[RMDB]
RNA sequence: GGGAACGACUCGAGUAGAGUCGAAAAAGCGGGCAUCCUGCAAGAGCAGGGCUGGCCCGAGCUGGUCGAAUGGUUCAUGCGUUCGCUGACGCAAGAACACUUCCGCGCCCUGUCUCGCCGGACGAUCGUGUGGGAGAUUUUUCGAAAUCUCCCACACAAAAGAAACAACAACAACAAC
Reactivity to 2A3 in 0.01 (KOAc 150mM, MgCl2 10mM, bicine 150mM(pH8.5), 24C), signal-to-noise 1, nucleotides 027 to 126: a000g050c040g000g000g040c050a040u000c000c000u020g000c080a210a020g030a010g200c020a000g080g030g000c040u100g050g000c010c000c000g010a030g070c180u070g010g000u080c010g080a140a060u140g060g030u010u050c010a000u020g020c000g030u000u080c200g260c300u280g010a020c000g000c000a010a010g000a000a030c040a030c000u040u030c030c050g040c000g000c020c030c020u000g000u000c050u050c010g020c000c040g010g090a060c010g040a110u180c080
Reactivity to DMS in 0.01 (KOAc 150mM, MgCl2 10mM, bicine 150mM(pH8.5), 24C), signal-to-noise 1, nucleotides 027 to 126: a130g010c010g000g000g030c040a060u000c000c000u000g000c030a160a070g000a150g000c030a020g000g000g000c300u020g000g000c020c000c030g000a020g000c070u020g030g010u000c070g030a030a060u040g030g000u000u000c010a120u000g020c000g000u000u000c300g000c300u010g020a010c000g010c000a100a070g010a010a000c020a080c100u000u010c010c140g040c140g030c010c040c070u000g000u030c050u000c070g000c070c070g000g020a050c140g010a100u020c070
Chemical mapping of a 177-nucleotide RNA with 2A3 and DMS. The DMS profile rests on 819 reads. In probing experiments dimethyl sulfate is read out at A N1 and C N3, which are open when not base-paired. Reactivities are rounded to 0.1 and cut off at 0 and 3.